[RMDB]
RNA sequence: GGGAACGACUCGAGUAGAGUCGAAAAUUGUCUUCCAGAGACAAAGCAAAACGAAACGUCAAAGUUCUGUGCUGGUGAAACCAGAUUUGAAGAAUAUCAAAGGCGUCUUACCAAAGAGGAAAAAAAAUGCAUCUUGCCAAGACUUGAAGAAAGGGAACACCUCAGUACUAUUCGUAGUACUGAGGUGAAAAGAAACAACAACAACAAC
Reactivity to DMS in 0.01 (KOAc 150mM, MgCl2 10mM, bicine 150mM(pH8.5), 24C), signal-to-noise 2, nucleotides 027 to 156: u000u010g100u000c000u000u000c050c130a160g040a220g000a080c070a060a130a210g060c040a090a100a080a110c020g020a080a050a070c090g010u010c050a120a140a230g020u030u000c030u010g020u000g000c030u020g000g010u010g030a140a100a300c040c010a020g000a160u000u000u010g030a080a050g000a070a070u000a120u000c050a090a090a080g030g000c020g000u000c090u000u010a140c070c040a000a080a080g010a040g050g010a010a000a030a040a100a000a100a030u020g020c000a050u000c070u010u000g000c020c050a090a090g010a040c000u000u000g000a070a020g000a060a060a040g000g010g020a060a210
Reactivity to 2A3 in 0.01 (KOAc 150mM, MgCl2 10mM, bicine 150mM(pH8.5), 24C), signal-to-noise 2, nucleotides 027 to 156: u010u030g000u000c020u030u050c070c040a040g000a000g020a170c010a010a030a000g040c050a070a060a030a070c070g100a160a020a000c000g010u090c040a090a050a070g060u050u040c040u030g130u070g020c020u020g020g040u140g100a130a090a080c020c000a010g040a120u040u120u210g100a100a050g020a080a030u110a040u200c090a070a000a050g000g030c010g010u020c020u060u100a070c000c040a060a080a010g030a060g030g000a090a000a000a020a000a030a000a000u110g000c030a040u000c040u070u040g030c010c000a020a000g040a090c000u070u050g020a070a040g010a060a070a000g000g020g000a040a040
The data come from the RNA Mapping Database (RMDB), library OK3TST. An RNA of 207 nucleotides, treated with DMS and 2A3 and read out base by base. High DMS reactivity at an A or C suggests that its Watson-Crick edge is free.